[RMDB]
RNA sequence: GGGAACGACUCGAGUAGAGUCGAAAAGAAGACGUGACGAAAAGUCACGUCAAUACAGAGACUACGCAACUCUGAAAAACACAACAAAAGUGUAAAAGCGUAGCAGGAUCGAGAGAUCCUGAAAAGAUACCUACGAUACCUUCGGGUAUCGUAGGUAAAAAGAAACAACAACAACAAC
Reactivity to DMS in 0.01 (KOAc 150mM, MgCl2 10mM, bicine 150mM(pH8.5), 24C), signal-to-noise 2, nucleotides 027 to 126: g020a300a190g000a000c000g020u000g010a000c000g050a100a160a070a150g030u000c010a000c000g000u000c000a070a010u050a110c040a010g000a000g000a210c000u000a000c010g000c020a180a000c000u000c000u040g000a070a110a090a150a070c000a000c020a030a060c300a120a080a140a060g000u000g040u000a030a000a000a160g000c000g020u000a010g000c000a000g010g000a000u000c010g000a210g010a200g000a000u000c000c000u000g000a020a100a080a070g000a180
Reactivity to 2A3 in 0.01 (KOAc 150mM, MgCl2 10mM, bicine 150mM(pH8.5), 24C), signal-to-noise 2, nucleotides 027 to 126: g180a090a060g010a000c010g000u000g000a000c010g150a210a100a050a040g000u000c000a000c000g000u000c000a000a020u020a000c000a000g020a000g050a080c020u000a000c000g000c020a120a040c000u000c000u060g020a000a000a000a040a000c130a040c080a250a090c070a070a130a020a030g020u020g040u050a050a030a000a000g000c000g000u000a000g000c000a000g000g000a000u010c010g000a000g000a010g010a160u000c000c010u000g020a000a000a000a000g060a000